The record gives the reactivity of an RNA of 177 nucleotides to 2A3 and DMS. The 2A3 profile rests on 1,019 reads. The data come from the RNA Mapping Database (RMDB), library OK1LIB. For DMS the reverse transcriptase was MarathonRT. For 2A3 the reverse transcriptase was SuperScript II with manganese. For DMS, 1,361 sequencing reads were counted.
RNA sequence: GGGAACGACUCGAGUAGAGUCGAAAAUGAGCCACCGCACCCCUCCCCUGCGGAGAACGAGGGGGAAGAUGCAAGCUGGGUUGCAGCACUCCCAGCACCUCCCACCUACGAGGUGGUUCAGGGUCGGCAGGCGGAUAUUCUUCGGAAUAUCCGCCUGAAAAGAAACAACAACAACAAC
Reactivity to 2A3 in 0.01 (KOAc 150mM, MgCl2 10mM, bicine 150mM(pH8.5), 24C), signal-to-noise 2, nucleotides 027 to 126: u050g000a000g030c030c000a020c030c010g020c010a000c010c000c000c010u010c030c010c020c030u230g100c210g040g010a050g080a070a060c030g060a020g030g000g030g050g000a010a030g000a030u250g040c160a150a100g000c010u000g000g040g000u180u100g030c100a010g080c000a060c090u040c000c000c000a000g000c000a090c010c000u000c000c000c030a300c040c070u060a130c110g020a050g080g000u000g040g000u000u000c000a020g000g010g000u130c070g020g020
Reactivity to DMS in 0.01 (KOAc 150mM, MgCl2 10mM, bicine 150mM(pH8.5), 24C), signal-to-noise 2, nucleotides 027 to 126: u000g000a000g000c020c000a000c000c000g060c250a220c160c030c070c030u010c000c030c040c070u000g030c120g000g000a130g000a130a050c050g030a120g070g000g010g050g000a000a010g000a210u020g010c270a110a070g050c010u000g000g020g000u000u030g000c010a120g000c150a050c100u000c000c000c050a000g150c000a060c170c030u000c070c000c000a120c030c050u000a140c130g000a130g000g050u000g020g030u000u000c010a100g090g000g090u000c050g000g000